Description
The record gives the reactivity of an RNA of 177 nucleotides to DMS and 2A3. Values cover nucleotides 27 to 126. Source: RMDB library OK2TRN, as collected in RNAgym. The RNA was probed in 150 mM KOAc, 10 mM MgCl2 and 150 mM bicine (pH 8.5) at 24 C. The 2A3 profile rests on 782 reads.
[RMDB]
RNA sequence: GGGAACGACUCGAGUAGAGUCGAAAAUCAACAAAUGAAAUUGCCUCCUGUCGAAUCUCUGGAGCAAUUGAACAACCCUCGUUUUGUGGUCGUACAAAACCCCUCUGCUAUUUUACUAAGGAGGAGCACGUACAGCCAAAUUCGUUUGGCUGUACGUAAAAGAAACAACAACAACAAC
Reactivity to DMS in 0.01 (KOAc 150mM, MgCl2 10mM, bicine 150mM(pH8.5), 24C), signal-to-noise 2, nucleotides 027 to 126: u000c060a110a080c130a070a070a120u050g010a070a060a060u000u010g000c120c070u000c010c010u000g020u000c110g010a090a160u000c110u010c030u000g000g000a020g000c020a040a040u000u000g000a110a090c110a050a150c050c010c030u000c150g050u000u000u000u000g020u010g020g010u010c130g000u000a070c060a010a030a020a010c020c050c000c000u010c010u010g000c210u000a060u000u000u010u000a060c180u030a160a300g010g000a020g000g000a120g030c110
Reactivity to 2A3 in 0.01 (KOAc 150mM, MgCl2 10mM, bicine 150mM(pH8.5), 24C), signal-to-noise 1, nucleotides 027 to 126: u020c010a010a100c050a040a170a070u140g020a100a000a000u060u010g020c000c070u000c020c000u040g050u100c000g100a220a240u100c100u040c010u090g000g010a020g000c050a000a000u010u050g010a040a030c040a040a070c010c030c000u030c080g020u000u070u000u080g060u020g010g140u080c150g080u070a020c000a000a010a020a010c000c020c050c000u030c000u050g000c000u030a110u200u240u030u050a100c040u070a070a060g020g010a000g040g000a020g000c000
The DMS profile rests on 981 reads.